RNA sequence: GGGAACGACUCGAGUAGAGUCGAAAAGAUAUGGAUAGCUUCAGUGGGAGCCACUAACUCGGAAACGAGUUAGAUGGCGAAGAACACUGAGAGCUAUCCUAAGUCAAAACCGGUACUUCGGUACCGGCCAAUUAUGCACGUUCGCGUGCAUAAUUGGAAAAGAAACAACAACAACAAC
Reactivity to 2A3 in 0.01 (KOAc 150mM, MgCl2 10mM, bicine 150mM(pH8.5), 24C), signal-to-noise 3, nucleotides 027 to 126: g010a010u090a020u170g000g000a000u000a010g000c000u010u020c010a010g010u010g010g020g030a030g000c000c000a000c010u000a000a000c010u000c010g020g040a080a070a060c010g000a000g000u020u000a000g020a060u010g010g000c020g030a040a010g010a010a010c000a000c000u000g030a100g080a000g120c010u000a000u000c000c000u000a040a010g050u000c040a020a020a130a220c010c000g000g010u010a000c000u060u090c300g150g000u010a000c000c000g000g000
Reactivity to DMS in 0.01 (KOAc 150mM, MgCl2 10mM, bicine 150mM(pH8.5), 24C), signal-to-noise 4, nucleotides 027 to 126: g020a030u000a300u000g000g000a000u000a010g010c000u000u000c020a010g030u000g010g010g000a140g010c010c000a020c000u000a000a000c000u000c000g000g020a120a120a180c000g000a010g000u000u000a000g010a110u000g010g000c000g000a040a110g000a110a220c000a000c000u000g010a070g010a030g030c000u000a000u000c000c000u000a010a060g010u000c020a110a030a130a250c010c000g020g000u000a000c000u000u030c240g050g010u000a000c000c000g010g000
An RNA of 177 nucleotides, treated with 2A3 and DMS and read out base by base.
Conditions: 150 mM KOAc, 10 mM MgCl2 and 150 mM bicine (pH 8.5), 24 C.
The DMS profile rests on 5,247 reads.
For DMS the reverse transcriptase was MarathonRT.
Reactivities are given for positions 27 through 126.
Source: RMDB library TTRDES, as collected in RNAgym.